Chemical mapping of a 177-nucleotide RNA with DMS.
Values cover nucleotides 27 to 126.
The reactions ran in a buffer of 150 mM KOAc, 10 mM MgCl2 and 150 mM bicine (pH 8.5), at 24 C.
For DMS, 782 sequencing reads were counted.
RNA sequence: GGGAACGACUCGAGUAGAGUCGAAAAGAUAUGGACUGAGGCAACAGCUCUAAGUGUCGGAAACGACACAAGAGACAUGCCUUUGUCCUAAGUCAAAGAGUUACUCUGCUUCGGCAGAGUAACUCAACACAACCGUCUACUUCGGUAGACGGUUGUGAAAAGAAACAACAACAACAAC
Reactivity to DMS in 0.01 (KOAc 150mM, MgCl2 10mM, bicine 150mM(pH8.5), 24C), signal-to-noise 1, nucleotides 027 to 126: g000a000u010a260u000g000g000a050c010u000g010a000g000g000c000a040a090c300a130g010c010u010c000u000a060a110g000u000g010u010c000g010g010a070a050a150c010g000a000c000a010c000a080a030g000a040g010a070c080a180u000g010c000c000u000u000u020g000u010c000c000u000a010a070g000u000c010a080a080a170g000a000g010u000u000a020c000u000c000u000g010c010u000u000c300g030g030c000a010g000a010g000u010a000a000c000u000c000a010a180